[RMDB]
RNA sequence: GGGAACGACUCGAGUAGAGUCGAAAACCGCCGUGCGCAGAUUGUCGUAGGAUGAACCCUUCGAACCGGUGAUAUGCAGGAAUUUGGCGUCCGGCCCGAACUUCUUCACCGCCAGGCCAAUGGUGUAGCGGUGGCACGAUUUCGAUCGUGCCACCGCAAAAGAAACAACAACAACAAC
Reactivity to 2A3 in 0.01 (KOAc 150mM, MgCl2 10mM, bicine 150mM(pH8.5), 24C), signal-to-noise 1, nucleotides 027 to 126: c070c000g000c000c060g010u110g000c000g020c030a030g010a070u200u190g060u080c020g090u080a080g000g020a110u200g120a010a010c030c030c000u230u150c000g000a000a000c000c000g020g030u020g030a030u010a000u280g080c010a000g080g080a250a030u100u000u050g020g000c000g000u030c000c070g070g000c030c000c000g000a000a040c070u120u070c000u100u050c020a100c140c000g000c000c110a010g020g120c020c060a070a090u170g000g000u000g000u030a060

The data come from the RNA Mapping Database (RMDB), library OK1LIB.
The record gives the reactivity of an RNA of 177 nucleotides to 2A3.
2A3 adducts were read by reverse transcription with SuperScript II with manganese.
The RNA was probed in 150 mM KOAc, 10 mM MgCl2 and 150 mM bicine (pH 8.5) at 24 C.
For 2A3, 336 sequencing reads were counted.